[RMDB]
RNA sequence: GGGAACGACUCGAGUAGAGUCGAAAAAUUAGCACUGGGGAGUUGCAGGGCAUAUGACUCCUAACUCAGCUACCUAACUCUAGCCCCUACUGCCUUCAGCCACUGUCCUGGGCUGCCCCACGUCAGACAUCUUCCUCCUCUCGGACACCAAAUACAGCAUAGUAGGCUUGUUCGCAAGCCUACUAUGAAAAGAAACAACAACAACAAC
Reactivity to DMS in 0.01 (KOAc 150mM, MgCl2 10mM, bicine 150mM(pH8.5), 24C), signal-to-noise 2, nucleotides 027 to 156: a120u000u000a120g010c070a110c030u000g050g060g010g000a090g050u000u000g010c050a070g010g030g020c020a100u030a060u000g040a040c020u000c040c040u000a050a080c060u000c030a080g020c010u000a050c060c020u000a060a070c060u000c050u000a160g000c020c000c000c040u000a110c050u000g020c010c010u000u000c020a060g010c060c010a070c110u000g050u000c020c030u000g000g000g010c020u000g020c040c000c010c020a040c070g000u010c060a130g050a080c040a080u000c040u000u000c030c010u000c010c030u000c040u000c080g020g020a120c060a030c020c030a090a060a100u000a040c060a150g020
Reactivity to 2A3 in 0.01 (KOAc 150mM, MgCl2 10mM, bicine 150mM(pH8.5), 24C), signal-to-noise 3, nucleotides 027 to 156: a000u120u080a030g020c040a010c070u030g000g000g000g000a030g020u030u110g130c080a020g000g000g010c030a010u080a070u190g070a050c030u030c010c000u020a030a020c020u030c050a010g000c020u030a060c010c000u030a070a100c030u030c050u070a050g030c040c000c000c000u030a040c030u030g020c020c000u070u070c050a020g010c030c010a050c040u030g000u020c000c010u000g010g020g030c030u130g040c000c000c000c000a040c020g040u020c020a010g030a110c020a050u040c030u060u020c000c010u000c010c000u040c000u030c050g020g010a010c010a010c070c000a000a040a070u300a060c030a010g300